[RMDB]
RNA sequence: GGGAACGACUCGAGUAGAGUCGAAAACAGACAGGCAUCAUAAACCUUUAGUUCAAUAGUGGCCAUGCCUGCUGAAAAGGUUUCUGGAAAUCACAGCUAAGAAUUGGUAAAGGUUUAAUAGAAGGCCGAAGGAGUACGAAUUCGUUCGUACUCCUUCAAAAGAAACAACAACAACAAC
Reactivity to DMS in 0.01 (KOAc 150mM, MgCl2 10mM, bicine 150mM(pH8.5), 24C), signal-to-noise 6, nucleotides 027 to 126: c050a140g010a130c200a090g010g020c010a030u010c050a130u000a030a010a030c010c010u000u000u000a040g000u010u000c050a050a070u000a090g020u000g020g010c040c070a070u000g000c010c000u000g000c050u000g010a060a070a090a110g020g010u000u010u010c100u000g000g010a070a070a190u010c060a080c070a090g000c090u010a090a130g000a060a040u000u000g010g010u000a010a020a030g000g000u000u000u000a010a060u000a090g030a090a170g010g030c030c050
Reactivity to 2A3 in 0.01 (KOAc 150mM, MgCl2 10mM, bicine 150mM(pH8.5), 24C), signal-to-noise 2, nucleotides 027 to 126: c010a000g230a030c020a040g000g010c000a010u020c000a000u060a020a020a030c010c000u060u030u060a050g020u150u080c030a030a040u030a120g050u060g050g000c000c010a010u030g000c010c010u020g020c060u080g060a060a080a010a040g070g000u050u100u060c080u090g060g060a060a120a000u100c020a040c010a060g030c020u080a120a050g010a170a140u060u060g080g010u060a020a000a030g020g000u000u020u000a010a010u030a040g060a130a030g060g000c010c020

Structure probing data (DMS and 2A3) for a 177-nucleotide construct. The reactions ran in a buffer of 150 mM KOAc, 10 mM MgCl2 and 150 mM bicine (pH 8.5), at 24 C. The 2A3 profile rests on 4,184 reads. Reactivities are rounded to 0.1 and cut off at 0 and 3.